[RMDB]
RNA sequence: GGGAACGACUCGAGUAGAGUCGAAAACGUAAAGGGCGAGCUUUUGUCCGGAAUGGUUCCGCCGUGAUCGGGCCAUGCAAUAGUUGCCAACGACAACUAUGCUCCGGUUGCUCAGGUAGCGUAACGCACAAUGGAACAACCUUCGGGUUGUUCCAAACAGCUUAUCUGGAUUCGUCCAGAUAAGCUGAAAAGAAACAACAACAACAAC
Reactivity to 2A3 in 0.01 (KOAc 150mM, MgCl2 10mM, bicine 150mM(pH8.5), 24C), signal-to-noise 4, nucleotides 027 to 156: c010g020u090a060a100a080g040g060g000c020g010a070g010c020u070u130u240u220g060u080c000c020g010g010a100a030u070g000g040u300u300c030c020g010c060c060g110u090g060a120u150c010g020g000g000c020c000a020u050g000c010a070a300u010a030g010u000u020g000c050c090a170a070c090g050a070c010a000a000c000u000a000u010g010c010u000c000c000g030g000u020u100g000c010u010c050a030g060g070u080a030g020c030g030u040a060a060c070g050c030a030c040a080a210u090g000g000a010a010c000a000a000c010c000u020u060c150g010g000g000u000u000g000u000u010c000c000a010a000a010
Reactivity to DMS in 0.01 (KOAc 150mM, MgCl2 10mM, bicine 150mM(pH8.5), 24C), signal-to-noise 2, nucleotides 027 to 156: c060g040u010a060a110a130g010g020g070c010g010a100g040c120u000u000u000u000g020u010c000c030g030g010a120a070u000g020g020u000u020c020c000g020c040c090g020u000g020a090u000c020g030g000g020c010c030a070u000g010c090a110a110u000a020g000u010u000g020c000c010a150a170c200g000a210c010a010a020c000u000a020u000g010c030u000c030c010g000g030u000u010g010c020u000c070a120g020g010u000a050g000c040g010u000a110a100c070g020c040a100c050a160a250u010g000g010a030a010c000a020a010c000c000u010u000c230g030g000g020u000u010g010u000u000c000c000a000a010a080